The data come from the RNA Mapping Database (RMDB), library OK2TST. An RNA of 177 nucleotides, treated with DMS and 2A3 and read out base by base. Values are in units of 0.01, from 0 to 300, in steps of 10. The reactions ran in a buffer of 150 mM KOAc, 10 mM MgCl2 and 150 mM bicine (pH 8.5), at 24 C.
[RMDB]
RNA sequence: GGGAACGACUCGAGUAGAGUCGAAAAACAAAUCGGUAAAGGAUUUUUCAUUGAUCAUGGUACGGGUGUGGUGAUUGGUGAGACUUGUGUGAUUGGGGAACGCGUUCGUAUUUAUCAGGCCGUGACAGAGUAUUACGGCAUUCGUGCCGUAAUACUCAAAAGAAACAACAACAACAAC
Reactivity to DMS in 0.01 (KOAc 150mM, MgCl2 10mM, bicine 150mM(pH8.5), 24C), signal-to-noise 2, nucleotides 027 to 126: a120c090a050a070a050u010c060g010g000u000a050a110a130g010g010a070u000u000u000u030u010c100a110u000u000g010a030u000c050a050u030g000g030u010a050c060g020g000g010u000g040u000g010g020u000g010a050u010u010g010g010u000g000a060g000a050c090u000u000g010u000g010u010g000a100u000u000g020g000g030g010a090a080c110g020c080g000u020u000c040g010u020a070u000u000u010a080u000c100a110g000g030c040c040g020u000g020a100c170a120
Reactivity to 2A3 in 0.01 (KOAc 150mM, MgCl2 10mM, bicine 150mM(pH8.5), 24C), signal-to-noise 1, nucleotides 027 to 126: a010c020a010a040a010u040c040g040g090u220a080a070a060g090g020a070u000u010u050u040u110c000a040u020u090g070a040u070c040a040u070g040g020u070a030c110g110g000g010u030g080u130g060g050u070g030a080u060u070g000g000u070g000a080g020a010c030u090u000g030u050g000u020g080a030u050u100g000g060g020g000a070a000c030g010c040g010u040u020c000g010u070a110u100u110u050a030u070c000a020g120g000c000c000g000u000g030a020c020a010